[RMDB]
RNA sequence: GGGAACGACUCGAGUAGAGUCGAAAAAGAGCCGGAUACGUCCGGCUCAACGGGGGAUACGUGUGGUGCCGUCCGCUCCCGCUAUGGCAUAACAAAUGCACCACACACUAGGCUACGGCCUAGUGAAAAAAGGUGUAUGUGUUCGCACAUACACCAAGAACGUACAAACCUUCGGGUUUGUACGUUCAAAAGAAACAACAACAACAAC
Reactivity to 2A3 in 0.01 (KOAc 150mM, MgCl2 10mM, bicine 150mM(pH8.5), 24C), signal-to-noise 1, nucleotides 027 to 156: a020g000a000g000c000c000g000g000a020u040a040c150g110u000c000c010g020g000c000u020c000a010a010c000g000g000g000g000g010a000u020a080c020g000u020g000u000g080g000u000g000c020c000g010u020c030c070g030c030u010c020c010c000g020c050u130a130u170g130g000c090a100u130a170a080c090a030a050a010u080g000c010a000c010c010a000c000a000c000a000c020u000a000g000g000c000u010a000c180g100g010c000c000u030a000g000u000g000a060a000a000a000a000a010g000g000u000g000u000a000u000g030u000g010u030u050c060g060c090a010c000a000u000a000c000a000c000c000a000a010
The data come from the RNA Mapping Database (RMDB), library M2RFPK. Chemical mapping of a 207-nucleotide RNA with 2A3. The reactions ran in a buffer of 150 mM KOAc, 10 mM MgCl2 and 150 mM bicine (pH 8.5), at 24 C.